The record gives the reactivity of an RNA of 170 nucleotides to DMS and 2A3. Source: RMDB library 15KLIB, as collected in RNAgym. Values cover nucleotides 27 to 129. For 2A3, 19,284 sequencing reads were counted.
RNA sequence: GGGAACGACUCGAGUAGAGUCGAAAAUUUAUUCACUGGGGACGACAACUCUGGGGAGAAAAGGGAGGAUCGGAUGGGAAGAGUAUAUCCUACGGGAAUCCCCCGGUCCCUCUCACGUCCAGCCCCUAUCCUGACGAGUUCGCUCGUCAGAAAAGAAACAACAACAACAAC
Reactivity to DMS in 0.01 (KOAc 150mM, MgCl2 10mM, bicine 150mM(pH8.5), 24C), signal-to-noise 5, nucleotides 027 to 129: u040u050u050a080u010u050c070a080c080u000g000g000g000g000a050c090g020a050c110a060a090c050u000c050u010g000g000g000g010a100g020a040a110a100a100g000g000g000a080g030g010a060u020c020g040g010a140u000g000g000g000a020a080g030a100g030u000a090u080a130u020c110c000u040a070c120g000g000g000a060a170u030c010c020c000c030c050g000g040u010c070c080c060u020c030u010c000a120c080g020u000c050c050a070g000c030c010c000c030u030a040u000c080
Reactivity to 2A3 in 0.01 (KOAc 150mM, MgCl2 10mM, bicine 150mM(pH8.5), 24C), signal-to-noise 7, nucleotides 027 to 129: u040u060u050a150u060u090c060a040c100u060g000g020g010g010a020c050g050a030c060a130a050c050u030c050u080g030g010g030g000a100g070a030a080a030a020g050g020g000a060g020g000a020u000c020g020g030a100u210g070g000g000a060a050g080a050g170u060a060u020a040u130c000c020u030a040c160g030g000g030a010a040u010c000c000c000c000c000g000g010u030c000c040c010u010c000u000c000a020c010g040u000c000c000a020g010c010c000c000c000u010a070u020c010